[RMDB]
RNA sequence: GGGAACGACUCGAGUAGAGUCGAAAAGCGUGAUCCGGCUUUAAUGCUUGCACCCGGUCCUAGCGCCCGUACCGAUCCUUCAAACUUCAGCAAGCCGGCGCUGUGACGUCUCUUGGUUCUGGGGCGACCUAGGCGGUGAUUUCGAUCACCGCCUAGGAAAAGAAACAACAACAACAAC
Reactivity to DMS in 0.01 (KOAc 150mM, MgCl2 10mM, bicine 150mM(pH8.5), 24C), signal-to-noise 2, nucleotides 027 to 126: g000c000g070u010g020a050u020c040c060g000g030c000u000u000u020a300a110u030g000c000u000u000g000c170a120c020c020c060g040g030u040c090c050u000a080g000c010g020c050c000c070g000u020a050c110c060g000a090u000c040c040u010u000c050a150a130a090c100u000u010c030a030g020c030a060a120g030c070c000g000g000c270g000c050u010g030u040g000a150c140g020u000c000u000c060u050u000g030g000u000u000c030u020g000g000g000g040c020g040a090
Reactivity to 2A3 in 0.01 (KOAc 150mM, MgCl2 10mM, bicine 150mM(pH8.5), 24C), signal-to-noise 2, nucleotides 027 to 126: g050c050g030u030g020a070u070c040c040g040g000c050u110u070u090a130a040u120g040c000u030u060g010c030a090c000c010c020g000g090u040c030c040u020a080g040c020g020c060c000c000g020u050a050c000c060g040a050u050c010c020u040u090c100a100a130a200c050u160u100c080a020g020c010a030a050g000c000c000g010g000c040g000c030u050g040u070g060a030c040g060u010c010u000c030u120u030g120g000u050u020c050u120g010g050g040g000c030g000a020

The data come from the RNA Mapping Database (RMDB), library OK1LIB. Chemical mapping of a 177-nucleotide RNA with DMS and 2A3. For DMS, 2,031 sequencing reads were counted. For 2A3, 1,545 sequencing reads were counted.